[RMDB]
RNA sequence: GGGAACGACUCGAGUAGAGUCGAAAACAGAUCCAAACAGCAUCUGAAAAAGCGCCGCACAAAGAAAUAGCCCCGCUAAAGGCGACAUAUAGACCAGCAACGCCGAACCUAAAAGGCUUUUUUCGGCGCGGUAUGGAUAAUUCGUUAUCCAUACCGCAAAAGAAACAACAACAACAAC
Reactivity to DMS in 0.01 (KOAc 150mM, MgCl2 10mM, bicine 150mM(pH8.5), 24C), signal-to-noise 2, nucleotides 027 to 126: c040a050g010a060u010c060c070a090a120a220c090a050g030c170a020u000c000u050g000a160a030a000a130a140g000c090g110c000c010g030c130a110c120a050a150a070g000a050a110a030u010a050g000c000c000c030c070g000c100u010a030a030a080g000g000c000g000a030c120a040u030a150u000a070g000a160c030c030a030g000c070a090a080c040g020c010c010g010a080a100c130c030u000a030a000a150a080g010g010c120u040u000u000u000u000u000c000g010g040c110
Reactivity to 2A3 in 0.01 (KOAc 150mM, MgCl2 10mM, bicine 150mM(pH8.5), 24C), signal-to-noise 2, nucleotides 027 to 126: c040a000g040a060u040c040c030a060a030a100c030a060g000c010a040u020c020u040g060a000a100a000a030a000g050c050g000c030c010g050c050a040c010a050a170a030g050a030a160a000u050a040g050c020c000c000c000g000c030u050a010a010a040g040g000c000g040a020c040a010u220a020u050a020g080a040c010c020a000g070c000a040a020c020g010c000c020g010a030a060c020c000u060a040a040a000a030g020g000c000u060u030u010u000u040u010c020g010g000c030
About this RNA: An RNA of 177 nucleotides, treated with DMS and 2A3 and read out base by base. The DMS profile rests on 1,745 reads. Source: RMDB library RFM100, as collected in RNAgym. The RNA was probed in 150 mM KOAc, 10 mM MgCl2 and 150 mM bicine (pH 8.5) at 24 C. DMS adducts were read by reverse transcription with MarathonRT.